[RMDB]
Structure probing data (DMS and 2A3) for a 177-nucleotide construct. Values are in units of 0.01, from 0 to 300, in steps of 10.
RNA sequence: GGGAACGACUCGAGUAGAGUCGAAAACGCACGGUUGUAGGUCAAAUCCAAGUAACGCUUUCGUGCUCGCGCUUCUGGAUCGGUCAACCCAUGUCAUUUUUCAGGUGGGGUUUGUAAGCAUUUAGCGCAAGUCAUCUAGAUUCGUCUAGAUGACUUGAAAAGAAACAACAACAACAAC
Reactivity to DMS in 0.01 (KOAc 150mM, MgCl2 10mM, bicine 150mM(pH8.5), 24C), signal-to-noise 9, nucleotides 027 to 126: c120g020c060a060c080g010g000u000u010g020u000a080g020g010u000c080a070a100a100u000c030c040a080a110g010u000a070a090c100g000c040u000u000u000c060g010u000g010c020u000c110g010c070g010c030u000u000c040u000g010g000a070u000c070g010g000u000c070a060a130c040c010c020a080u000g010u040c080a120u010u000u000u010u010c110a070g000g010u000g010g000g000g010u000u000u000g010u000a080a100g010c040a100u000u000u000a100g020c100g010
Reactivity to 2A3 in 0.01 (KOAc 150mM, MgCl2 10mM, bicine 150mM(pH8.5), 24C), signal-to-noise 5, nucleotides 027 to 126: c030g020c020a020c030g030g020u100u080g050u110a060g040g020u070c040a100a040a080u080c040c020a050a030g070u060a110a020c040g000c050u030u110u120c040g020u040g010c020u050c030g030c010g000c030u060u020c030u070g070g010a100u040c020g000g050u050c030a030a080c000c040c000a030u080g080u040c040a060u030u080u060u160u160c070a030g060g000u050g010g050g020g020u020u110u150g060u070a070a010g020c020a030u110u110u240a050g000c040g000

Reactivities are given for positions 27 through 126.